Chemical mapping of a 177-nucleotide RNA with 2A3 and DMS.
The data come from the RNA Mapping Database (RMDB), library OK2TST.
For DMS, 873 sequencing reads were counted.
For DMS the reverse transcriptase was MarathonRT.
[RMDB]
RNA sequence: GGGAACGACUCGAGUAGAGUCGAAAACGUUUUGUGACAAGCAUUUAAGCAUUGGCAUAGGCAUAGACACUCCUUGGACUUUAUGUCGAGCCCGGGUCGCGUCAGUAUAUAACAUCAAUAAUGCCAAGAUGCGUUCGAAGUUCGCUUCGAACGCAUCAAAAGAAACAACAACAACAAC
Reactivity to 2A3 in 0.01 (KOAc 150mM, MgCl2 10mM, bicine 150mM(pH8.5), 24C), signal-to-noise 1, nucleotides 027 to 126: c000g020u000u030u180u080g080u090g030a040c070a060a050g010c040a040u040u110u240a090a060g100c070a070u100u030g000g010c020a010u040a030g040g000c000a000u030a000g050a010c010a010c090u020c040c000u060u140g050g030a050c000u200u140u080a120u300g230u100c010g000a000g000c000c000c000g090g010g000u030c000g000c060g060u080c010a030g180u070a020u040a010u040a170a030c000a040u160c030a060a090u130a090a030u090g060c010c050a020a010
Reactivity to DMS in 0.01 (KOAc 150mM, MgCl2 10mM, bicine 150mM(pH8.5), 24C), signal-to-noise 1, nucleotides 027 to 126: c110g020u000u000u000u010g030u000g010a120c070a070a060g000c050a120u010u010u000a050a090g020c040a080u010u000g010g000c040a040u010a070g020g000c040a040u000a080g010a110c070a050c090u000c040c100u010u020g030g000a010c050u010u010u010a090u020g020u000c110g000a050g020c000c000c000g030g000g000u000c060g030c000g020u000c020a020g010u020a070u000a060u020a090a120c150a030u020c070a070a130u030a090a020u010g040c010c010a060a090